[RMDB]
RNA sequence: GGGAACGACUCGAGUAGAGUCGAAAACUGUGCCAGUGUGCACUCAAAGCUGACGCUUUGGGGCCGCCUCUGCUGGGUUUUCGCCCAGUUGAACAGUCGAAGACCGUGGAAGCCGUAAUGGCACGAAUAACGGAUAUGCAUUCGUGCAUAUCCGUUAAAAAGAAACAACAACAACAAC
Reactivity to DMS in 0.01 (KOAc 150mM, MgCl2 10mM, bicine 150mM(pH8.5), 24C), signal-to-noise 5, nucleotides 027 to 126: c050u010g010u000g000c050c060a060g000u010g010u030g000c010a160c000u000c010a000a020a010g010c000u020g020a200c300g000c010u000u010u000g000g010g010g010c020c040g000c030c090u000c010u000g000c030u010g000g020g010u020u010u010u020c150g000c010c000c030a060g000u010u030g020a110a070c090a100g010u000c030g020a090a050g000a070c020c040g020u010g000g010a090a080g020c020c090g020u040a090a110u020g010g010c010a050c050g010a120a120
Reactivity to 2A3 in 0.01 (KOAc 150mM, MgCl2 10mM, bicine 150mM(pH8.5), 24C), signal-to-noise 4, nucleotides 027 to 126: c020u020g000u030g020c010c010a060g010u040g060u150g090c050a130c270u010c010a010a010a000g000c040u170g150a040c200g020c010u010u010u010g000g000g000g020c010c020g000c000c000u010c000u030g010c020u030g050g000g040u020u080u090u130c060g000c000c000c020a030g020u040u050g020a030a020c020a020g030u030c030g080a090a000g020a040c030c010g020u100g050g040a140a010g030c040c000g000u120a110a100u090g010g000c020a010c040g030a050a040